[RMDB]
RNA sequence: GGGAACGACUCGAGUAGAGUCGAAAAGGUUGGUUGGUUAAGGAAUUGGCCAAUUGGCCGGAAGGAAUUGGCCGGCCGGAAGGAACCAACCGGAAGGAACCGGAAGGAAGGAAGGAAUUAAGGUUCCACCCCUUCCCAGUUUCGACUGGGAAGGGGUAAAAGAAACAACAACAACAAC
Reactivity to DMS in 0.01 (KOAc 150mM, MgCl2 10mM, bicine 150mM(pH8.5), 24C), signal-to-noise 1, nucleotides 027 to 126: g010g010u000u000g010g010u000u000g000g030u000u000a110a120g030g030a080a110u000u000g020g010c000c000a070a050u000u030g010g010c000c000g000g070a130a140g000g020a060a090u000u000g020g020c000c010g020g010c030c020g020g010a070a100g000g000a060a040c010c010a040a040c020c000g000g010a130a080g010g000a050a060c050c050g000g020a090a100g020g050a070a110g000g010a070a080g000g000a130a070u010u020a110a090g000g010u000u000c000c010